Background
Structure probing data (2A3 and DMS) for a 177-nucleotide construct. The RNA was probed in 150 mM KOAc, 10 mM MgCl2 and 150 mM bicine (pH 8.5) at 24 C. It was measured as part of the RMDB library OK2TST.
RNA sequence: GGGAACGACUCGAGUAGAGUCGAAAAGUCUGCUGCUCAAGGAAGACUGCUGCACGGACGAACUCCAGUCUGCCCUGGACGCAGGAUGGCGCCUUCUCGCCGUGUGUCCUCAGGAAGCGCGCCGGCCUACGUCAACUACCUUCGGGUAGUUGACGUAAAAAGAAACAACAACAACAAC
Reactivity to 2A3 in 0.01 (KOAc 150mM, MgCl2 10mM, bicine 150mM(pH8.5), 24C), signal-to-noise 2, nucleotides 027 to 126: g050u020c000u000g020c030u060g000c000u070c090a050a030g040g000a050a060g050a020c010u000g010c040u060g020c030a020c060g080g100a070c090g010a090a030c050u000c010c010a010g010u070c000u050g030c020c000c000u010g020g070a040c040g000c040a020g020g070a020u130g010g000c010g030c000c020u020u000c040u000c020g080c070c090g050u120g000u010g040u090c020c040u050c020a000g020g040a030a010g000c070g020c000g000c040c000g020g000c020c000
Reactivity to DMS in 0.01 (KOAc 150mM, MgCl2 10mM, bicine 150mM(pH8.5), 24C), signal-to-noise 3, nucleotides 027 to 126: g020u000c010u000g000c130u000g050c080u010c080a120a120g010g010a170a030g010a050c030u000g000c100u000g010c090a090c070g000g010a080c130g000a060a100c080u000c060c020a080g000u000c020u000g000c070c040c030u000g000g020a050c040g010c060a010g010g010a050u000g010g020c030g020c020c040u000u010c010u000c050g030c070c020g010u010g020u000g010u010c030c020u010c100a160g010g000a030a010g000c140g020c020g020c020c000g000g020c020c010